[RMDB]
An RNA of 177 nucleotides, treated with 2A3 and DMS and read out base by base. It was measured as part of the RMDB library OK1LIB. For 2A3, 14,992 sequencing reads were counted. The RNA was probed in 150 mM KOAc, 10 mM MgCl2 and 150 mM bicine (pH 8.5) at 24 C. Reactivities are given for positions 27 through 126.
RNA sequence: GGGAACGACUCGAGUAGAGUCGAAAAAGUGGGGAUCGACGUCAUCAAUGACGUUGUACCAGGCAGCAUUAUUGAAGACCUUUGGACUAAGGUCCAGGUGUCCACACAGGUAAUUAUGUGGGCCUAAGACGAUAAGUUUUUUCGAAAACUUAUCGUCAAAAGAAACAACAACAACAAC
Reactivity to 2A3 in 0.01 (KOAc 150mM, MgCl2 10mM, bicine 150mM(pH8.5), 24C), signal-to-noise 9, nucleotides 027 to 126: a010g220u180g020g030g010g030a060u210c010g000a000c000g020u010c010a080u080c070a090a300u240g000a000c000g000u000u000g000u010a050c010c010a000g040g000c010a010g000c010a030u020u050a040u070u180g090a090a030g020a040c000c000u080u130u160g020g000a010c020u070a090a180g130g000u000c000c000a010g010g030u080g010u030c040c010a060c010a010c020a060g130g110u180a060a030u060u060a030u030g010u020g060g120g000c000c000u060a120a040
Reactivity to DMS in 0.01 (KOAc 150mM, MgCl2 10mM, bicine 150mM(pH8.5), 24C), signal-to-noise 7, nucleotides 027 to 126: a060g020u030g010g010g000g010a110u030c040g000a020c020g010u000c010a070u020c240a130a130u020g000a010c020g030u000u000g020u010a140c040c030a060g000g000c020a300g000c040a060u010u000a030u000u020g000a130a170g000a030c000c030u010u020u030g000g010a030c030u010a120a090g040g000u000c000c010a020g010g010u010g010u000c000c030a090c130a070c200a090g010g020u030a070a070u010u010a070u000g000u000g000g000g000c060c020u000a070a150